[RMDB]
RNA sequence: GGGAACGACUCGAGUAGAGUCGAAAAGGCAGAAAAAUUACAGAGUGCAGCAAGGCAAGCAACUGCAGUGCAACUCUACCGUACGUGAUUGGGAACGAAACGGGAACAAAGCUGAGACUGCUGAGUCAUGUUAACGGAUCUUCGGAUCCGUUAACAUAAAAGAAACAACAACAACAAC
Reactivity to 2A3 in 0.01 (KOAc 150mM, MgCl2 10mM, bicine 150mM(pH8.5), 24C), signal-to-noise 1, nucleotides 027 to 126: g000g010c010a020g070a050a120a000a030a000u130u040a020c050a020g030a010g010u040g090c020a020g020c010a010a050g150g030c010a000a040g010c070a110a020c060u030g000c000a030g000u000g070c020a040a040c010u020c000u030a050c000c020g000u030a000c040g010u000g010a170u140u260g070g130g000a110a000c000g010a170a110a000c010g010g000g000a000a000c050a070a090a010g080c030u030g010a010g030a080c020u010g000c000u040g020a020g070u000c030
Reactivity to DMS in 0.01 (KOAc 150mM, MgCl2 10mM, bicine 150mM(pH8.5), 24C), signal-to-noise 2, nucleotides 027 to 126: g010g030c030a020g000a040a060a060a090a060u000u010a050c180a050g000a050g060u000g030c110a070g020c030a080a080g010g010c060a030a060g000c170a090a090c120u000g000c020a070g000u020g020c060a080a060c020u000c020u020a140c030c020g000u000a160c050g000u010g010a180u000u000g000g030g000a070a010c020g000a050a050a070c060g000g000g020a100a050c160a040a060a090g010c030u000g000a090g000a090c020u000g000c020u000g000a070g000u000c100
About this RNA
This 177-nucleotide RNA was probed chemically with 2A3 and DMS. Values are in units of 0.01, from 0 to 300, in steps of 10. The reactions ran in a buffer of 150 mM KOAc, 10 mM MgCl2 and 150 mM bicine (pH 8.5), at 24 C. Values cover nucleotides 27 to 126. 2A3 adducts were read by reverse transcription with SuperScript II with manganese. For DMS, 1,357 sequencing reads were counted.